[RMDB]
RNA sequence: GGGAACGACUCGAGUAGAGUCGAAAAGAUAUGGAGCUCACUAGCAAUGAUGUCGCAUCGGAAACGAUGCGAGUUGAGCUAGAGAGCUCCUAAGUCAAAGCUCCCUUGCCUUCGGGCAAGGGAGCAAGUACAAAAUGUUGUUCGCAACAUUUUGUACAAAAGAAACAACAACAACAAC
Reactivity to 2A3 in 0.01 (KOAc 150mM, MgCl2 10mM, bicine 150mM(pH8.5), 24C), signal-to-noise 3, nucleotides 027 to 126: g010a000u010a010u040g000g000a000g020c000u000c010a030c010u020a000g000c030a120a300u160g010a000u030g060u150c000g000c000a000u000c000g000g000a010a010a000c000g000a000u000g000c000g000a000g000u040u100g030a000g000c000u000a010g040a010g000a000g020c000u000c000c000u000a000a000g000u000c010a030a050a020g000c000u010c000c010c000u000u000g030c030c000u070u070c300g120g000g000c000a000a000g000g000g000a000g010c000a000a000
Reactivity to DMS in 0.01 (KOAc 150mM, MgCl2 10mM, bicine 150mM(pH8.5), 24C), signal-to-noise 4, nucleotides 027 to 126: g010a010u000a070u010g000g000a030g030c010u000c000a200c010u010a010g020c010a300a300u010g010a060u010g010u000c010g020c000a010u000c000g010g010a010a020a040c000g010a000u000g000c000g010a010g000u000u010g010a130g020c010u000a000g000a090g010a010g010c000u000c000c010u000a000a040g000u000c010a100a140a170g000c000u000c000c020c000u000u000g010c000c000u000u020c230g020g000g010c020a010a000g000g000g010a000g000c000a000a020
An RNA of 177 nucleotides, treated with 2A3 and DMS and read out base by base. For DMS, 5,208 sequencing reads were counted. Values are in units of 0.01, from 0 to 300, in steps of 10. For 2A3 the reverse transcriptase was SuperScript II with manganese.